Source: RMDB library RFM100, as collected in RNAgym. This 177-nucleotide RNA was probed chemically with DMS and 2A3. For 2A3, 1,512 sequencing reads were counted.
RNA sequence: GGGAACGACUCGAGUAGAGUCGAAAAAUUCUGGCGGGCCUGGCGGAGCGCGGCAACGCGCAGAGAUUGCGAGGCGACCGGGGCCAGCUGGGCCCCAGCGGCUCGCCCCUCGGCGGGGCCGGGAGCCUACGGACUAUUGUUUCGACAAUAGUCCGUAAAAAGAAACAACAACAACAAC
Reactivity to DMS in 0.01 (KOAc 150mM, MgCl2 10mM, bicine 150mM(pH8.5), 24C), signal-to-noise 2, nucleotides 027 to 126: a140u020u030c010u000g030g010c030g000g000g000c010c030u000g010g020c040g000g000a160g050c030g010c010g000g010c180a090a160c020g000c000g020c020a080g040a110g010a130u040u010g000c000g020a010g020g020c090g000a050c030c030g020g000g030g030c000c000a190g000c140u030g000g000g000c050c030c000c010a010g010c000g000g010c020u000c020g000c000c200c150c010u000c110g010g000c090g000g010g000g000c000c020g000g020g000a100g000c010c030
Reactivity to 2A3 in 0.01 (KOAc 150mM, MgCl2 10mM, bicine 150mM(pH8.5), 24C), signal-to-noise 2, nucleotides 027 to 126: a000u090u050c020u020g090g010c040g080g020g030c030c000u020g060g060c050g020g060a110g020c040g000c000g020g020c010a080a030c000g010c000g020c060a020g030a000g000a110u130u220g010c000g010a020g090g040c020g010a090c000c050g020g000g000g000c010c000a090g070c140u190g000g000g000c000c010c000c020a000g010c000g030g030c020u000c000g000c000c000c000c010u020c010g080g030c050g000g020g010g000c000c000g030g030g000a030g030c000c000

For DMS, 3,059 sequencing reads were counted. The reactions ran in a buffer of 150 mM KOAc, 10 mM MgCl2 and 150 mM bicine (pH 8.5), at 24 C.